[RMDB]
Overview: Structure probing data (DMS and 2A3) for a 307-nucleotide construct. The reactions ran in a buffer of 150 mM KOAc, 10 mM MgCl2 and 150 mM bicine (pH 8.5), at 24 C.

RNA sequence: GGGAACGACUCGAGUAGAGUCGAAAAGAACCUCUACGGAGGUUCAGGUACUCUUCGGAGUACCACGAACUGCUUCGGCAGUUCGAACAGCGUCUUCGGACGCUGAACUUCACACUACGGUGUGAAGACCUAAGCUUCGGCUUAGGAGGAGUCGUUCGCGACUCCACGUAUGUCUACGGACAUACGAGCGAGAUCGUGAGAUCUCGCAAGAGGCACUACGGUGCCUCAAAUUCAGGUGAUUUGCUACCUUUAAGUGCAGCUAGAAUACAAGGUGCUUCGGCACCUUGAAAAGAAACAACAACAACAAC
Reactivity to DMS in 0.01 (KOAc 150mM, MgCl2 10mM, bicine 150mM(pH8.5), 24C), signal-to-noise 1, nucleotides 027 to 266: g000a020a000c010c000u000c000u020a170c080g020g000a000g000g010u020u000c020a020g010g020u000a000c010u000c000u000u020c130g000g030a010g000u000a020c000c030a100c000g020a000a000c000u000g010c000u010u000c220g020g000c010a000g010u000u010c000g020a250a300c000a010g070c010g050u030c000u030u040c160g020g010a000c000g010c000u010g010a090a120c020u000u000c000a010c000a000c020u000a130c120g010g010u000g000u000g010a000a000g000a040c000c000u000a000a000g010c000u000u000c160g020g000c000u000u000a000g000g000a100g010g010a000g000u000c000g000u000u010c200g050c010g000a010c020u000c000c010a060c000g020u000a000u000g020u000c010u010a070c200g020g000a010c020a000u000a000c010g000a230g000c010g000a010g010a020u000c010g020u000g000a240g000a000u020c020u010c010g120c000a020a030g000a000g000g000c010a000c000u020a120c110g020g000u000g000c000c000u000c000a040a080a080u020u010c300a010g000g020u010g010a070u000u000u010g000c000u010a010c010c000u000u000u000a020a020g030u000g000c070a020g010c260u020a080g000a180a150u020a210
Reactivity to 2A3 in 0.01 (KOAc 150mM, MgCl2 10mM, bicine 150mM(pH8.5), 24C), signal-to-noise 6, nucleotides 027 to 266: g000a000a010c010c000u000c010u030a090c300g120g000a000g000g000u010u010c000a000g000g000u000a000c000u000c010u010u110c280g090g000a000g000u000a000c000c000a000c000g000a000a000c000u000g010c000u030u020c110g130g000c010a000g000u000u000c000g000a110a020c010a000g000c000g000u000c010u040u070c230g130g010a000c000g000c000u000g000a010a010c000u000u000c000a000c010a000c010u050a040c290g100g000u010g000u000g000a000a000g010a000c000c000u000a000a000g030c000u030u200c300g130g000c000u000u010a000g000g010a040g000g000a000g000u000c000g020u050u080c170g020c010g090a000c000u000c010c000a020c010g000u000a000u000g000u010c000u020a050c280g100g000a000c000a000u000a000c010g000a010g000c000g000a000g000a000u000c000g020u030g060a090g000a020u000c000u000c000g000c000a010a010g000a000g000g000c000a000c010u060a020c300g080g000u000g000c000c000u000c000a010a020a000u180u170c020a010g000g020u020g070a300u050u080u110g010c010u000a010c000c000u090u150u300a030a010g020u020g020c000a000g020c010u110a180g100a150a080u300a090